Description:
Chemical mapping of a 207-nucleotide RNA with 2A3 and DMS. The data come from the RNA Mapping Database (RMDB), library M2RFPK.

RNA sequence: GGGAACGACUCGAGUAGAGUCGAAAAGAAAGAAAGAAGAAUCACCAGGAGGCAAGGAUCCUUAACUACGUUAUUCGGGCACCUUGAGUUGAGAGGAGCUAGUGGUGCGCCCGGCCUGGAGAUCAAAACACGACAGGCGGGUUCGCCCGCCUGUCAAUCAUUAACCAGUGUUCGCACUGGUUAAUGAAAAAGAAACAACAACAACAAC
Reactivity to 2A3 in 0.01 (KOAc 150mM, MgCl2 10mM, bicine 150mM(pH8.5), 24C), signal-to-noise 1, nucleotides 027 to 156: g040a000a080a030g060a030a120a010g020a060a020g000a050a060u040c000a020c060c000a020g020g020a010g000g030c030a040a100g060g000a040u080c010c030u030u030a030a040c030u070a080c130g110u210u030a090u050u140c000g000g000g020c010a060c020c000u090u150g060a000g050u030u080g040a050g000a010g040g010a010g010c010u040a020g060u030g050g010u010g000c010g020c070c000c010g030g000c020c000u000g060g000a010g000a010u050c060a000a040a040a040c050a020c120g000a000c000a020g010g020c000g030g040g040u030u000c080g040c010c000c010g000c000c010u000g000u010c000a000a000
Reactivity to DMS in 0.01 (KOAc 150mM, MgCl2 10mM, bicine 150mM(pH8.5), 24C), signal-to-noise 1, nucleotides 027 to 156: g010a120a100a120g030a110a020a100g000a110a150g000a130a100u000c000a100c040c030a080g030g000a110g030g030c070a080a110g000g010a050u000c040c000u000u040a030a110c070u000a050c080g010u000u000a100u000u010c000g010g020g040c030a130c060c010u000u000g000a080g000u000u000g000a150g000a160g000g000a100g030c010u000a080g040u030g020g030u000g000c050g000c010c000c050g010g000c060c020u000g000g000a140g010a130u030c060a090a060a070a060c130a070c020g040a040c000a010g000g000c000g010g000g040u010u000c300g030c050c000c040g050c000c000u000g000u000c000a000a040